Chemical mapping of a 177-nucleotide RNA with 2A3 and DMS. For DMS the reverse transcriptase was MarathonRT. The DMS profile rests on 1,149 reads. The RNA was probed in 150 mM KOAc, 10 mM MgCl2 and 150 mM bicine (pH 8.5) at 24 C. It was measured as part of the RMDB library OK2TST.

[RMDB]
RNA sequence: GGGAACGACUCGAGUAGAGUCGAAAAAGGGCCGCCUACCGGGUGAGGGUGGGGGCACACAACAUCCGUCGCAUCAACGUGGAGAUCGCGCCGCUCGACGUGGAAGGGUUCAGGCGCCUCAAGGCCGUAGACAUCGCUAUUUCGAUAGCGAUGUCUAAAAAGAAACAACAACAACAAC
Reactivity to 2A3 in 0.01 (KOAc 150mM, MgCl2 10mM, bicine 150mM(pH8.5), 24C), signal-to-noise 1, nucleotides 027 to 126: a000g060g020g000c050c010g100c100c000u050a030c030c010g030g000g180u140g140a080g170g000g000u140g000g000g000g040g000c060a030c000a000c010a040a080c010a030u030c020c030g140u030c010g030c050a070u050c030a050a090c040g040u090g120g060a040g000a030u170c110g000c060g010c050c000g010c030u020c060g090a070c000g020u040g010g100a080a040g070g010g000u080u000c040a000g000g020c000g010c000c000u060c020a000a090g050g060c030c030g020
Reactivity to DMS in 0.01 (KOAc 150mM, MgCl2 10mM, bicine 150mM(pH8.5), 24C), signal-to-noise 1, nucleotides 027 to 126: a070g000g000g030c050c070g040c000c000u000a060c030c020g010g000g040u010g000a110g000g010g010u000g000g000g000g000g020c080a020c060a060c140a070a090c070a040u010c030c000g020u000c050g000c070a180u010c040a120a040c020g010u000g030g000a050g000a030u000c080g020c060g000c040c020g020c020u000c030g000a050c070g020u000g000g030a100a110g000g010g000u000u010c060a100g010g030c030g010c060c020u010c090a130a100g010g010c000c020g010